The record gives the reactivity of an RNA of 177 nucleotides to 2A3 and DMS.
2A3 adducts were read by reverse transcription with SuperScript II with manganese.
2A3 is a SHAPE reagent: it acylates the 2'-hydroxyl of flexible nucleotides of all four kinds.
Source: RMDB library TTRDEL, as collected in RNAgym.
The 2A3 profile rests on 51,665 reads.
The reactions ran in a buffer of 150 mM KOAc, 10 mM MgCl2 and 150 mM bicine (pH 8.5), at 24 C.

RNA sequence: GGGAACGACUCGAGUAGAGUCGAAAAGAUAUGGAUCCCAUGAAGGCUUGGACCUCGGAAACGAGCUAGCCUACAUGUGGAUCCUAAGUCAAACACUCGAAUGAAUCUUCGGAUUCAUUCGAGUGAAGCUUAAUCAUAAGUUCGCUUAUGAUUAAGCAAAAGAAACAACAACAACAAC
Reactivity to 2A3 in 0.01 (KOAc 150mM, MgCl2 10mM, bicine 150mM(pH8.5), 24C), signal-to-noise 9, nucleotides 027 to 126: g020a010u050a030u140g000g000a000u000c000c010c000a000u010g020a020a010g040g010c110u200u210g070g150a300c060c020u010c010g020g030a070a060a050c010g000a000g010c000u010a000g000c000c000u010a010c000a000u080g100u300g010g000a000u000c000c000u000a010a010g020u000c030a020a090a050c010a000c000u000c000g000a000a000u010g000a000a000u000c020u050u130c300g110g000a000u000u000c000a000u000u000c000g000a000g000u000g000a000a000
Reactivity to DMS in 0.01 (KOAc 150mM, MgCl2 10mM, bicine 150mM(pH8.5), 24C), signal-to-noise 9, nucleotides 027 to 126: g010a050u000a300u000g000g000a010u000c000c000c000a010u000g010a180a010g000g010c010u010u010g030g010a120c300c010u000c000g000g000a080a090a180c010g000a020g010c020u000a020g010c000c000u000a050c000a010u000g010u010g020g000a010u000c000c000u000a010a060g000u000c030a150a110a270c010a010c000u000c010g000a010a010u000g000a010a010u000c000u000u010c200g030g010a010u000u000c000a000u000u000c000g000a000g010u000g000a030a080